The record gives the reactivity of an RNA of 177 nucleotides to DMS and 2A3. For 2A3 the reverse transcriptase was SuperScript II with manganese. The RNA was probed in 150 mM KOAc, 10 mM MgCl2 and 150 mM bicine (pH 8.5) at 24 C. It was measured as part of the RMDB library OK2TRN. The DMS profile rests on 1,114 reads.
[RMDB]
RNA sequence: GGGAACGACUCGAGUAGAGUCGAAAAUGUUGUUAGAUCCAACAUCAGAUCAACAAGUGCGUGAGGCAUUCCCAGGCUAGGAAAGCCUACACAUUCCACAGUACAACCUUGGUGCAUUCGCUCCAGCCCCAUUGGGAGGAUUCGUCCUCCCAAUGGGAAAAGAAACAACAACAACAAC
Reactivity to DMS in 0.01 (KOAc 150mM, MgCl2 10mM, bicine 150mM(pH8.5), 24C), signal-to-noise 2, nucleotides 027 to 126: u020g010u000u010g020u000u010a180g000a080u000c090c130a090a090c130a090u030c120a060g010a070u000c010a030a030c010a060a080g020u000g010c070g030u000g000a080g030g000c010a120u000u000c020c000c010a130g000g020c210u000a160g000g000a060a010a110g020c000c010u000a030c030a030c050a090u010u000c040c020a070c150a060g000u050a050c160a040a060c010c170u000u020g020g000u010g010c170a150u030u000c110g000c030u010c020c020a080g000c130
Reactivity to 2A3 in 0.01 (KOAc 150mM, MgCl2 10mM, bicine 150mM(pH8.5), 24C), signal-to-noise 2, nucleotides 027 to 126: u110g030u030u000g010u010u010a070g020a020u040c040c010a040a020c020a130u120c050a040g020a100u060c000a000a030c010a070a080g070u050g090c080g050u070g060a040g000g100c000a020u000u040c000c020c000a050g090g040c020u110a070g020g130a060a010a000g000c000c000u100a050c030a000c020a060u080u010c010c000a010c030a080g100u150a040c030a090a060c010c030u080u120g000g000u020g000c030a070u090u220c100g010c010u000c040c010a060g020c030